[RMDB]
RNA sequence: GGGAACGACUCGAGUAGAGUCGAAAAAAGGUACGCACCUUGAGACACCGGGAAACAAUCGAUCAAUCUUUCACAGAGCAACGAGUUCGCUACUCUUGCAAAAGAUCGACUUCCUAUUUCGUGGAUAAAAAGGGCUCUUAUUCGUAAGAGCCCUUUUAAAAGAAACAACAACAACAAC
Reactivity to DMS in 0.01 (KOAc 150mM, MgCl2 10mM, bicine 150mM(pH8.5), 24C), signal-to-noise 2, nucleotides 027 to 126: a050a000g000g010u010a070c210g040c180a110c010c000u010u000g000a150g030a210c080a100c090c040g000g000g000a000a000a040c080a140a120u000c010g000a010u010c020a070a150u000c080u010u000u000c140a020c180a050g000a070g010c010a000a020c120g000a130g030u000u010c190g020c200u000a040c010u000c010u010u000g010c030a030a040a030a150g000a020u000c000g000a020c120u000u000c010c020u000a060u000u010u000c080g010u010g020g010a130u000a020
This 177-nucleotide RNA was probed chemically with DMS. Source: RMDB library OK2TRN, as collected in RNAgym. The reactions ran in a buffer of 150 mM KOAc, 10 mM MgCl2 and 150 mM bicine (pH 8.5), at 24 C.